[RMDB]
RNA sequence: GGGAACGACUCGAGUAGAGUCGAAAAUGCGCUCAGGCUUUCGAUCCGUCGUUGGCCACGGCGGCAGACUUGCCUGAUGAGCGGCAGGGAAUCGUUACGGGACCACUUGUCCGAUGGUCCCAUACAGCACUAUAUAGAGGUUCGCCUCUAUAUAGUGAAAAGAAACAACAACAACAAC
Reactivity to DMS in 0.01 (KOAc 150mM, MgCl2 10mM, bicine 150mM(pH8.5), 24C), signal-to-noise 9, nucleotides 027 to 126: u010g010c030g000c030u000c010a030g010g010c000u000u000u000c010g000a210u010c010c010g020u000c000g010u000u010g010g010c200c090a180c020g000g000c000g000g010c300a200g000a030c110u000u010g010c000c000u000g010a060u010g010a040g020c020g010g000c050a070g010g000g010a090a050u010c110g010u000u000a060c130g000g010g000a020c000c000a030c060u010u000g010u000c090c070g000a170u000g000g000u000c000c000c000a030u000a020c160a180g000
Reactivity to 2A3 in 0.01 (KOAc 150mM, MgCl2 10mM, bicine 150mM(pH8.5), 24C), signal-to-noise 7, nucleotides 027 to 126: u060g000c010g000c000u010c010a000g010g000c020u030u040u050c050g080a190u110c010c010g000u010c010g010u040u090g080g040c020c010a010c000g000g000c010g000g000c010a010g010a030c050u060u150g010c000c010u050g020a080u110g010a020g020c040g060g000c020a030g030g030g060a040a110u140c090g050u080u120a060c080g010g010g000a000c000c010a020c050u110u200g120u120c040c030g040a080u010g000g000u000c000c000c000a000u010a000c010a010g030
Notes
An RNA of 177 nucleotides, treated with DMS and 2A3 and read out base by base. The reactions ran in a buffer of 150 mM KOAc, 10 mM MgCl2 and 150 mM bicine (pH 8.5), at 24 C. 2A3 adducts were read by reverse transcription with SuperScript II with manganese. DMS adducts were read by reverse transcription with MarathonRT. High 2A3 reactivity points to a flexible backbone, as in loops and unpaired stretches. Reactivities are rounded to 0.1 and cut off at 0 and 3. Values cover nucleotides 27 to 126. It was measured as part of the RMDB library RFMREP. The DMS profile rests on 18,576 reads.